Conditions: 150 mM KOAc, 10 mM MgCl2 and 150 mM bicine (pH 8.5), 24 C. This 177-nucleotide RNA was probed chemically with DMS. For DMS, 846 sequencing reads were counted. For DMS the reverse transcriptase was MarathonRT. It was measured as part of the RMDB library OK2TRN. Values cover nucleotides 27 to 126.
RNA sequence: GGGAACGACUCGAGUAGAGUCGAAAAUCUGAGCGACAUGACCCUUAUUAAGGUGAGUGCUGCCCAGGCUAUAGAGAAAGUUAAUGAGUGUGUUAAAAGCCAAUCACCUAGGAUAAAUUUCUGUGGCAGGCCUGAAGAAAUUCGUUUCUUCAGGCCUAAAAGAAACAACAACAACAAC
Reactivity to DMS in 0.01 (KOAc 150mM, MgCl2 10mM, bicine 150mM(pH8.5), 24C), signal-to-noise 2, nucleotides 027 to 126: u010c000u020g000a100g040c000g040a030c030a000u010g010a300c300c000c000u000u000a150u000u000a030a000g000g000u010g000a300g000u000g030c020u000g000c010c010c030a000g000g020c150u000a080u000a010g010a100g000a020a020a100g010u010u010a070a100u010g000a040g030u000g010u010g010u000u010a090a070a050a180g020c120c080a040a140u000c010a010c020c020u010a120g000g010a080u000a030a040a150u010u000u010c010u000g000u010g010g050c130